[RMDB]
RNA sequence: GGGAACGACUCGAGUAGAGUCGAAAACUUUCUGGACAGAAGCAACGUACAUCUUACAUGUAUUGAUGGAUAUCUUAUGUCUCUCUAAAACAUGUAAGACCAAGUUGUAGCCCAACCACCUUGGGUAUAUGUUCGCAGGACCUCCUGAGGCUGUGCCGAUUUAUGCUGUUUUCGAACAGCAUAAAUCAAAAGAAACAACAACAACAAC
Reactivity to DMS in 0.01 (KOAc 150mM, MgCl2 10mM, bicine 150mM(pH8.5), 24C), signal-to-noise 4, nucleotides 027 to 156: c060u000u000u000c040u000g020g020a070c030a090g000a110a290g010c010a030a010c020g020u000a140c170a050u000c000u000u000a020c010a020u000g010u000a100u000u000g010a060u000g020g020a040u000a040u000c230u000u010a100u000g020u000c010u000c300u000c010u000a060a090a110a030c010a020u000g010u000a010a010g010a000c010c030a070a290g010u000u000g040u000a140g010c000c010c010a040a090c060c100a060c070c080u000u000g020g010g010u000a050u000a040u020g020u000u000c040g020c080a110g010g000a110c090c100u000c030c030u000g000a080g030g020c010u000g010u010g010c090c110
Reactivity to 2A3 in 0.01 (KOAc 150mM, MgCl2 10mM, bicine 150mM(pH8.5), 24C), signal-to-noise 9, nucleotides 027 to 156: c030u060u090u030c040u070g040g030a020c020a050g080a160a030g020c000a000a010c010g030u040a010c010a020u000c000u010u000a000c000a000u000g020u030a090u080u130g020a040u060g020g000a010u030a040u070c200u200u270a150u300g020u000c020u000c000u000c020u100a100a080a000a020c000a000u000g000u000a000a000g000a010c000c000a060a000g000u000u000g010u040a020g000c000c010c000a010a030c060c060a070c020c030u030u030g020g000g050u040a080u020a020u150g060u030u050c060g000c070a050g020g060a100c000c030u100c010c050u120g050a040g040g000c040u060g030u070g110c040c060